[RMDB]
RNA sequence: GGGAACGACUCGAGUAGAGUCGAAAAUCAGGUAACUGCAUCUGCUUAUCAGAUCUGUUCAGAGCCGACCCUCCGUCACACCUUUGUGUUUCCCAGUAAUUCUGCCUGGCGUUGCCGUGGCUCCUCGCCUGUUUUGGCGAUUCGUCGCCAAAACAGGAAAAGAAACAACAACAACAAC
Reactivity to 2A3 in 0.01 (KOAc 150mM, MgCl2 10mM, bicine 150mM(pH8.5), 24C), signal-to-noise 2, nucleotides 027 to 126: u080c020a020g040g010u030a030a060c010u040g050c020a020u020c010u050g050c050u170u160a070u300c010a010g000a060u010c020u050g050u040u020c020a000g010a030g070c040c040g030a060c000c000c000u030c010c010g020u000c000a030c020a020c040c000u060u070u080g080u010g000u030u030u020c000c000c000a010g050u050a020a130u080u040c030u090g020c010c010u020g020g020c040g150u040u130g000c010c030g080u050g020g000c000u020c010c000u020c020g010
Reactivity to DMS in 0.01 (KOAc 150mM, MgCl2 10mM, bicine 150mM(pH8.5), 24C), signal-to-noise 2, nucleotides 027 to 126: u010c070a110g000g000u010a100a020c080u020g000c150a010u000c030u000g020c260u000u040a050u020c050a070g000a070u010c080u010g000u020u040c120a080g000a130g000c020c010g030a120c080c010c020u000c010c000g000u000c020a040c030a090c060c110u000u010u010g020u000g030u000u000u000c000c000c000a160g000u010a020a080u050u000c090u010g000c040c020u010g020g010c070g000u000u030g010c010c000g000u000g040g000c030u010c010c050u000c040g010
The record gives the reactivity of an RNA of 177 nucleotides to 2A3 and DMS. The data come from the RNA Mapping Database (RMDB), libraries RFM100 and RFMREP. DMS adducts were read by reverse transcription with MarathonRT.